[RMDB]
RNA sequence: GGGAACGACUCGAGUAGAGUCGAAAAACUGUUGCUAAAGCAUUGGCAAAAGUGCAAGAUGUUGUCAACAUACAAGGGCAAGCUUUAAGCCACCUAACAGUACAAUUGCAAAAUAAUUUCCAAGCCAUUAGUAGUUCUAUUAGUGACAUUUAUAAUAACAGUGUUACAGAUUCGUCUGUAACACUGUAAAAGAAACAACAACAACAAC
Reactivity to 2A3 in 0.01 (KOAc 150mM, MgCl2 10mM, bicine 150mM(pH8.5), 24C), signal-to-noise 3, nucleotides 027 to 156: a000c040u020g020u040u020g000c020u030a060a030a020g040c020a070u030u080g020g000c050a050a060a020a030g100u070g030c010a040a030g010a120u080g000u090u060g070u070c080a050a030c020a140u200a060c060a070a050g000g000g010c040a040a040g000c050u100u170u100a070a010g020c020c000a030c000c000u060a070a040c040a040g010u020a000c010a050a100u020u060g000c000a000a050a000a090u160a040a100u070u090u070c050c040a060a020g030c000c020a010u050u010a040g060u020a020g020u110u070c050u080a110u080u020a020g050u010g030a010c000a030u100u150u160a240u070a130a090u140a050
Reactivity to DMS in 0.01 (KOAc 150mM, MgCl2 10mM, bicine 150mM(pH8.5), 24C), signal-to-noise 2, nucleotides 027 to 156: a040c060u000g000u000u000g020c000u010a120a120a190g010c070a100u000u000g040g030c050a070a030a060a140g000u000g030c020a060a040g000a070u010g020u010u000g030u000c050a060a130c070a150u000a080c090a070a150g020g000g020c040a060a090g010c050u000u000u000a130a170g020c020c020a030c010c010u000a070a130c070a090g000u000a000c040a050a140u000u000g000c020a040a060a090a120u000a070a100u010u000u000c020c020a080a170g030c000c010a040u000u000a020g020u000a040g010u000u010c070u000a020u000u000a030g040u010g010a020c020a070u010u000u000a040u000a070a110u000a120